[RMDB]
RNA sequence: GGGAACGACUCGAGUAGAGUCGAAAAACAGAUGGCGUUCAUGGGAGAUACGCUACACUUCCUGGAGCCGGCGUUCCUCACAGACCUCUUCGACCGCUCCCCGCACUUAAACACCCUCUAUGCCACCACCCAGUGGAUCUUUCGAGAUCCACUGGGUAAAAGAAACAACAACAACAAC
Reactivity to DMS in 0.01 (KOAc 150mM, MgCl2 10mM, bicine 150mM(pH8.5), 24C), signal-to-noise 2, nucleotides 027 to 126: a180c090a120g000a100u000g010g000c080g040u030u030c150a060u040g000g000g000a050g020a240u040a000c120g000c010u000a130c100a160c000u000u010c040c000u000g010g000a150g030c050c070g000g000c040g010u000u000c020c020u000c090a110c120a010g020a040c020c070u000c020u020u000c060g000a020c080c080g000c000u000c000c020c000c040g040c040a040c090u000u000a000a020a100c090a110c010c000c000u000c090u000a050u000g050c070c000a010c080c000
Reactivity to 2A3 in 0.01 (KOAc 150mM, MgCl2 10mM, bicine 150mM(pH8.5), 24C), signal-to-noise 5, nucleotides 027 to 126: a010c060a020g110a120u070g030g000c030g060u070u040c100a090u160g110g120g000a050g020a060u170a140c050g020c040u060a030c040a020c030u030u030c010c020u010g030g020a010g050c050c000g060g000c010g020u050u040c010c000u030c010a080c030a040g060a040c000c010u060c040u070u060c020g060a060c010c010g020c030u030c000c000c000c000g000c000a100c040u060u210a090a070a010c020a040c000c020c000u020c000u020a070u140g020c000c010a040c020c010